[RMDB]
RNA sequence: GGGAACGACUCGAGUAGAGUCGAAAACUUCGAGCACCUGCCGCUAGAUCAAGCACUUCUGUCAAAUGGCGUUGCGGAGGCCGGUUGCAUCUAGACUGGUCGCGUGAAAUCAGGAACUCUAUUUGGCAUUGGUCUGUUCAUUCGUGAACAGACCAAUAAAAGAAACAACAACAACAAC
Reactivity to DMS in 0.01 (KOAc 150mM, MgCl2 10mM, bicine 150mM(pH8.5), 24C), signal-to-noise 2, nucleotides 027 to 126: c050u000u000c030g060a080g010c010a060c000c000u000g000c040c080g020c010u050a000g000a120u010c140a060a090g010c120a080c060u010u000c060u010g000u000c000a030a020a040u040g000g010c060g000u000u000g000c040g020g020a220g010g010c060c050g000g000u020u000g020c170a150u000c200u020a090g020a020c020u000g020g040u000c030g010c080g000u020g000a060a050a220u020c140a050g000g010a060a040c010u010c000u000a000u020u000u030g000g020c070
Reactivity to 2A3 in 0.01 (KOAc 150mM, MgCl2 10mM, bicine 150mM(pH8.5), 24C), signal-to-noise 3, nucleotides 027 to 126: c030u090u110c050g010a010g000c010a030c060c000u000g010c030c000g000c030u050a050g010a090u070c020a070a010g070c010a040c090u060u020c060u060g050u080c030a020a000a090u060g030g000c030g020u000u050g030c010g040g030a100g000g000c010c000g000g000u010u020g010c010a070u040c030u050a020g050a050c020u000g010g010u000c010g000c020g060u030g090a120a150a060u130c060a060g030g090a040a030c000u020c000u060a030u060u090u060g050g000c040
This 177-nucleotide RNA was probed chemically with DMS and 2A3. For 2A3 the reverse transcriptase was SuperScript II with manganese. The data come from the RNA Mapping Database (RMDB), library OK1LIB. The RNA was probed in 150 mM KOAc, 10 mM MgCl2 and 150 mM bicine (pH 8.5) at 24 C. DMS adducts were read by reverse transcription with MarathonRT.